[RMDB]
RNA sequence: GGGAACGACUCGAGUAGAGUCGAAAAGAUAUGGACGCGACGAAGUACAAAUUCUCGCCAUCGGAAACGAUGGGCGAGUUAUUGUACAGAGCGUCCUAAGUCAAAGAUAGUGCUUCGGCACUAUCAACAACGUUCCUAUGUUCGCAUAGGAACGUUGAAAAGAAACAACAACAACAAC
Reactivity to DMS in 0.01 (KOAc 150mM, MgCl2 10mM, bicine 150mM(pH8.5), 24C), signal-to-noise 6, nucleotides 027 to 126: g000a070u000a300u020g000g010a010c000g030c000g010a270c280g000a150a130g010u000a000c000a000a030a300u000u000c000u000c010g010c000c000a020u010c000g000g010a150a070a110c000g010a000u000g030g010g010c000g000a000g010u010u000a020u000u010g010u000a000c010a070g010a120g020c000g020u000c000c000u000a010a050g010u010c040a110a150a140g000a020u000a010g020u000g010c000u000u010c230g010g000c000a010c010u000a000u000c000a160a150
Reactivity to 2A3 in 0.01 (KOAc 150mM, MgCl2 10mM, bicine 150mM(pH8.5), 24C), signal-to-noise 3, nucleotides 027 to 126: g030a010u060a050u100g010g010a010c010g110c000g130a300c080g080a300a060g000u000a000c010a020a200a130u140u010c030u000c000g000c000c000a000u010c010g010g020a060a090a010c020g000a010u050g090g080g110c010g010a000g000u010u020a170u030u040g030u000a000c010a030g020a010g000c000g000u000c000c000u000a030a010g010u000c020a100a100a000g010a010u000a010g020u010g000c010u070u110c300g130g000c000a000c000u000a000u000c000a010a010
The data come from the RNA Mapping Database (RMDB), library TTRDES.
This 177-nucleotide RNA was probed chemically with DMS and 2A3.
For 2A3 the reverse transcriptase was SuperScript II with manganese.
Reactivities are rounded to 0.1 and cut off at 0 and 3.
The reactions ran in a buffer of 150 mM KOAc, 10 mM MgCl2 and 150 mM bicine (pH 8.5), at 24 C.